[RMDB]
RNA sequence: GGGAACGACUCGAGUAGAGUCGAAAAGCUAGUCGGUGACGACUAGCAGCCACGACUAAGGUCGUGGGAAGAUGCUUACAAACAGCACAGUAGCAUCAAUAACUACAUCAUGUGCUGAAACCGGAUUAACGGAUAACAUUAAAAUUUAAGAUGUAGGCGCAUAUUAGUCAUUCGUGACUAAUAUGCGAAAAGAAACAACAACAACAAC
Reactivity to 2A3 in 0.01 (KOAc 150mM, MgCl2 10mM, bicine 150mM(pH8.5), 24C), signal-to-noise 4, nucleotides 027 to 156: g000c000u000a020g000u000c000g020g030u050g050a050c040g000a000c000u000a000g000c000a010g000c000c000a000c000g000a000c000u070a060a200g230g010u000c000g000u000g030g020g000a010a060g010a000u050g000c030u180u170a020c030a040a140a010c010a020g000c010a000c010a020g000u020a000g000c010a000u010c010a020a140u170a130a060c010u020a020c000a000u020c010a040u110g000u010g000c000u010g040a100a000a000c000c000g050g030a170u150u180a130a060c010g040g020a070u110a160a020c060a070u170u300a060a040a100a120u140u170u120a030a030g010a010u020g020u020a000g050g010
Reactivity to DMS in 0.01 (KOAc 150mM, MgCl2 10mM, bicine 150mM(pH8.5), 24C), signal-to-noise 1, nucleotides 027 to 156: g000c000u000a000g030u020c050g000g000u000g000a300c000g010a110c020u020a010g010c000a150g000c000c000a000c010g000a060c000u000a060a110g050g000u000c010g000u000g000g000g010a070a090g020a030u000g030c010u000u030a050c100a030a060a170c020a030g000c010a050c020a270g010u000a090g000c000a040u000c070a100a170u000a150a040c010u000a000c050a130u030c070a160u000g020u000g010c000u000g000a140a160a220c010c020g010g010a140u000u000a080a160c020g000g010a160u000a050a070c030a040u000u030a000a240a040a190u000u000u000a110a140g010a080u000g000u000a020g020g010